[RMDB]
RNA sequence: GGGAACGACUCGAGUAGAGUCGAAAACGAACCGCAGAUGACCACCCGGUCGUCGGCAAUGAGCAGCUUGGCGUGGACAUAGAGCUCUUCUUGGAUCCAGUUCCGCAUCUCAGACUCCGGGUCCUCAUGGCUGUCCCACGGCUCGUCCUUGAGGGAGCUGAUGUCACCAAUUCGUUGGUGACAUCAGAAAAGAAACAACAACAACAAC
Reactivity to DMS in 0.01 (KOAc 150mM, MgCl2 10mM, bicine 150mM(pH8.5), 24C), signal-to-noise 1, nucleotides 027 to 156: c040g020a010a090c060c040g010c030a040g020a060u000g010a040c010c020a240c060c160c120g040g030u000c040g100u000c030g000g070c060a100a060u040g020a110g000c020a010g000c020u000u000g040g000c030g020u010g030g050a060c020a110u010a050g000a080g010c070u000c060u000u000c090u000u010g000g020a040u010c040c070a210g040u010u000c030c010g000c060a100u000c020u010c060a170g000a040c020u000c010c040g020g000g020u010c010c000u010c060a050u010g010g050c040u020g000u000c080c040c020a070c050g000g010c010u000c050g030u010c040c030u040u000g020a140g020g030g000a200g030
Reactivity to 2A3 in 0.01 (KOAc 150mM, MgCl2 10mM, bicine 150mM(pH8.5), 24C), signal-to-noise 2, nucleotides 027 to 156: c040g040a070a030c050c060g000c050a030g010a050u050g010a020c030c020a020c050c070c080g010g020u030c030g000u020c020g020g000c030a070a150u140g010a020g030c030a010g010c050u090u160g050g000c010g060u080g020g010a000c010a060u140a060g050a010g030c010u040c000u220u050c010u040u120g070g010a060u040c020c030a050g020u120u030c010c020g000c070a210u110c060u020c040a020g010a080c030u010c050c050g030g000g000u020c000c000u020c050a100u090g040g010c020u030g060u080c050c010c020a040c040g030g000c000u030c050g020u040c040c010u050u030g040a060g020g040g030a030g010

The data come from the RNA Mapping Database (RMDB), library OK3TST. The record gives the reactivity of an RNA of 207 nucleotides to DMS and 2A3. The RNA was probed in 150 mM KOAc, 10 mM MgCl2 and 150 mM bicine (pH 8.5) at 24 C. The DMS profile rests on 1,977 reads.